Notes
Chemical mapping of a 170-nucleotide RNA with 2A3 and DMS. For 2A3 the reverse transcriptase was SuperScript II with manganese. For 2A3, 5,855 sequencing reads were counted. For DMS, 12,748 sequencing reads were counted. The data come from the RNA Mapping Database (RMDB), library 15KLIB. The reactions ran in a buffer of 150 mM KOAc, 10 mM MgCl2 and 150 mM bicine (pH 8.5), at 24 C. Reactivities are given for positions 27 through 129.
RNA sequence: GGGAACGACUCGAGUAGAGUCGAAAACGAGCUGGGAGAGGAGAGGCGAAGAUAGCAGCGGAGACCCCGGUCCGAAUGCCCGUCGGCAGCAAACUCCUCUGGAGUCCUUCGGAUCCAAAGGAGAAAACAGGUUGUGCGUUCGCGCACAACAAAAGAAACAACAACAACAAC
Reactivity to 2A3 in 0.01 (KOAc 150mM, MgCl2 10mM, bicine 150mM(pH8.5), 24C), signal-to-noise 3, nucleotides 027 to 129: c070g000a020g000c010u040g000g000g000a070g010a020g020g010a050g010a010g020g000c010g010a010a000g030a020u120a030g040c020a000g010c000g020g020a020g020a060c030c020c020c000g010g040u030c010c000g040a070a020u060g000c000c000c010g050u010c040g070g020c000a030g010c010a100a050a110c000u030c000c000u020c010u020g010g000a070g190u050c010c000u160u110c150g000g000a000u010c000c020a010a000a000g010g000a000g000a020a120a000a000c020a020g130
Reactivity to DMS in 0.01 (KOAc 150mM, MgCl2 10mM, bicine 150mM(pH8.5), 24C), signal-to-noise 3, nucleotides 027 to 129: c060g040a040g000c070u030g000g000g000a080g000a090g060g030a050g020a020g010g010c160g000a090a050g040a070u060a080g020c130a100g030c130g000g050a060g010a050c020c050c040c080g020g020u050c000c000g030a090a050u050g000c070c040c060g000u040c000g020g000c080a040g010c140a100a120a090c000u000c000c030u040c110u010g060g010a080g050u010c030c030u020u040c210g030g030a080u030c030c030a010a080a070g000g000a040g030a080a060a070a070c220a040g000